[RMDB]
RNA sequence: GGGAACGACUCGAGUAGAGUCGAAAAGUGUCGAAAUAAGGCGUAAGCCUGUGAACCAUUAUAAGCGAUUGAUUGUGUGCUGAGUGGAAAGACUUGGUGCAUAAAGUUGCAUAUAGUAUUGAAAAUACAAAGUAAAGACCUUCGGGUCUUUACUUUGAAAAGAAACAACAACAACAAC
Reactivity to DMS in 0.01 (KOAc 150mM, MgCl2 10mM, bicine 150mM(pH8.5), 24C), signal-to-noise 2, nucleotides 027 to 126: g000u010g010u000c070g010a090a080a090u010a080a050g010g010c000g000u010a090a170g010c010c000u000g010u000g000a110a120c060c030a040u010u000a030u010a070a070g030c000g010a020u000u000g000a150u010u000g010u000g000u010g000c010u010g010a000g000u010g030g000a170a110a150g010a060c010u000u010g000g050u000g000c020a000u010a040a050a090g010u000u000g020c010a090u000a000u000a050g020u000a070u000u010g000a080a070a060a090u020a140

Structure probing data (DMS) for a 177-nucleotide construct. The RNA was probed in 150 mM KOAc, 10 mM MgCl2 and 150 mM bicine (pH 8.5) at 24 C. DMS adducts were read by reverse transcription with MarathonRT. For DMS, 1,648 sequencing reads were counted.